Record summary:
Structure probing data (2A3) for a 207-nucleotide construct. For 2A3 the reverse transcriptase was SuperScript II with manganese. High 2A3 reactivity points to a flexible backbone, as in loops and unpaired stretches.
[RMDB]
RNA sequence: GGGAACGACUCGAGUAGAGUCGAAAAGAUGGAGGCCAUUGAAAAGAUCGAGGCCACCAGCGACGACGAAGACAUAUUAAAGCGUUUCAAUUUAUCGACAGUGCGCUUCAAGGUGAUAUACGGCGACACGGAUUCGUCUUUCAUUCAAGUGCUGUUCCAGCCUUGUACUCUUCGGAGUACAAGGCUGAAAAGAAACAACAACAACAAC
Reactivity to 2A3 in 0.01 (KOAc 150mM, MgCl2 10mM, bicine 150mM(pH8.5), 24C), signal-to-noise 2, nucleotides 027 to 156: g110a010u040g000g020a060g050g000c060c050a160u070u090g020a130a070a070a110g140a030u140c110g030a050g040g000c010c000a010c000c000a000g000c050g060a070c050g000a000c030g040a020a020g090a060c050a050u200a050u020u210a190a120a020g080c020g000u060u100u040c060a090a120u060u090u130a150u150c030g000a000c000a080g060u050g020c010g030c030u070u030c110a090a020g030g000u010g010a000u030a020u060a110c150g000g000c000g000a010c040a080c300g100g020a030u010u000c040g020u000c000u000u150u030c050a050u210u030c050a030a020g000u030g080c010u030g000u020u000c000